[RMDB]
RNA sequence: GGGAACGACUCGAGUAGAGUCGAAAACUCGGCUAUGUCGGUAGACUGUCGCGUGGAAUAAACACUUCGGACCCGGGGGGCAGUACCCCGGCGCCUCCACCACCAGCCGCAGGCCGAAGAUUUUCGGAAGUCUGAAUUUUUUCGAAAAUUCAGACUUAAAAGAAACAACAACAACAAC
Reactivity to DMS in 0.01 (KOAc 150mM, MgCl2 10mM, bicine 150mM(pH8.5), 24C), signal-to-noise 2, nucleotides 027 to 126: c080u000c000g020g030c000u030a040u010g000u030c010g010g010u020a090g020a160c160u020g020u010c140g030c140g020u020g000g010a100a090u040a060a060a120c180a040c210u040u030c110g030g000a090c190c000c020g010g000g000g000g000g000c240a100g020u050a040c010c020c000c000g030g000c300g000c090c030u020c010c040a020c000c000a050c050c060a240g000c020c000g000c000a020g000g030c010c000g000a030a090g000a130u000u020u000u000c010g000g030
Reactivity to 2A3 in 0.01 (KOAc 150mM, MgCl2 10mM, bicine 150mM(pH8.5), 24C), signal-to-noise 4, nucleotides 027 to 126: c010u000c000g010g010c010u070a140u300g060u280c020g030g000u060a080g070a210c070u120g040u100c080g030c070g050u010g010g010a080a060u140a150a210a030c110a050c140u200u210c120g080g000a130c000c000c000g000g000g000g000g030g010c060a020g050u160a060c000c000c000c000g000g000c000g010c000c010u010c000c010a020c000c000a020c000c020a010g030c000c000g010c010a010g020g000c000c000g000a010a030g020a030u030u050u010u030c010g040g050
This 177-nucleotide RNA was probed chemically with DMS and 2A3.
The RNA was probed in 150 mM KOAc, 10 mM MgCl2 and 150 mM bicine (pH 8.5) at 24 C.
For DMS the reverse transcriptase was MarathonRT.
Source: RMDB library RFM100, as collected in RNAgym.
For 2A3, 1,715 sequencing reads were counted.
For DMS, 2,470 sequencing reads were counted.